[RMDB]
Structure probing data (DMS and 2A3) for a 177-nucleotide construct.
The reactions ran in a buffer of 150 mM KOAc, 10 mM MgCl2 and 150 mM bicine (pH 8.5), at 24 C.
DMS adducts were read by reverse transcription with MarathonRT.
For 2A3, 709 sequencing reads were counted.
It was measured as part of the RMDB library OK2TST.
RNA sequence: GGGAACGACUCGAGUAGAGUCGAAAAGCAAUGGCGAACAUUCCCCAGGUAUCACAGGGAAGUACGUUCUCAGUCGGUGCUGGUGUCGGUGGGUAUGAUUCUGAACAAGCGGUUGCCGUAGGGUUUAAUGAAUCUUCCUGUUCGCAGGAAGAUUCAUAAAAGAAACAACAACAACAAC
Reactivity to DMS in 0.01 (KOAc 150mM, MgCl2 10mM, bicine 150mM(pH8.5), 24C), signal-to-noise 3, nucleotides 027 to 126: g030c150a090a060u010g020g010c040g010a060a050c070a240u000u000c010c010c010c120a160g010g010u000a060u000c080a050c100a160g010g010g010a040a050g000u010a110c130g040u000u010c010u010c020a110g010u000c060g040g000u000g020c040u000g010g030u000g020u010c090g000g020u020g000g020g020u010a050u000g010a080u000u010c050u010g010a090a060c120a060a180g010c020g000g000u000u010g000c010c050g010u000a100g010g000g010u000u000u010a100
Reactivity to 2A3 in 0.01 (KOAc 150mM, MgCl2 10mM, bicine 150mM(pH8.5), 24C), signal-to-noise 1, nucleotides 027 to 126: g080c100a020a160u080g070g000c000g000a020a030c030a070u010u070c020c020c000c000a030g000g000u190a080u230c070a050c010a060g010g000g070a050a030g040u170a040c120g050u030u050c020u000c030a080g050u020c050g050g050u110g000c030u120g000g060u060g040u100c020g060g000u030g040g000g000u070a050u070g120a180u020u020c070u070g110a060a040c020a090a000g060c050g030g010u060u100g020c010c000g000u020a040g060g040g020u040u120u210a110